Structure probing data (DMS and 2A3) for a 177-nucleotide construct. Values are in units of 0.01, from 0 to 300, in steps of 10. The RNA was probed in 150 mM KOAc, 10 mM MgCl2 and 150 mM bicine (pH 8.5) at 24 C.

[RMDB]
RNA sequence: GGGAACGACUCGAGUAGAGUCGAAAAGCCUACCUGCGCAUGCCGGGCGGGCGCGUGCACUGGUUCUCCAUCCUCAACUCGCUCAUGGUCGUCGUCGUCAUGUCCUCCAUCGUCGCCAUGAUCAUGAGUGAACACACACUUUCGAGUGUGUGUUCACAAAAGAAACAACAACAACAAC
Reactivity to DMS in 0.01 (KOAc 150mM, MgCl2 10mM, bicine 150mM(pH8.5), 24C), signal-to-noise 2, nucleotides 027 to 126: g040c040c000u000a060c020c030u000g000c070g020c100a070u010g020c050c040g010g010g000c040g010g010g010c080g010c050g010u010g000c040a110c080u000g000g020u000u000c040u000c000c050a030u000c020c040u020c030a040a100c100u000c020g000c020u000c020a030u010g000g000u000c010g000u010c100g010u030c010g000u000c060a080u000g010u020c090c060u000c130c020a050u000c080g040u000c030g010c070c050a050u000g010a030u000c000a020u000g010a090
Reactivity to 2A3 in 0.01 (KOAc 150mM, MgCl2 10mM, bicine 150mM(pH8.5), 24C), signal-to-noise 1, nucleotides 027 to 126: g010c000c010u020a030c000c030u020g020c050g050c020a090u120g010c020c000g080g040g020c020g000g000g010c050g000c020g000u060g000c030a020c100u030g100g000u060u020c020u050c000c030a120u100c000c000u050c000a070a090c020u000c030g000c010u010c010a030u070g010g000u000c020g020u010c040g020u090c000g050u030c060a060u090g090u080c020c070u040c080c000a070u060c100g040u020c030g010c060c010a030u130g000a010u060c020a010u000g000a000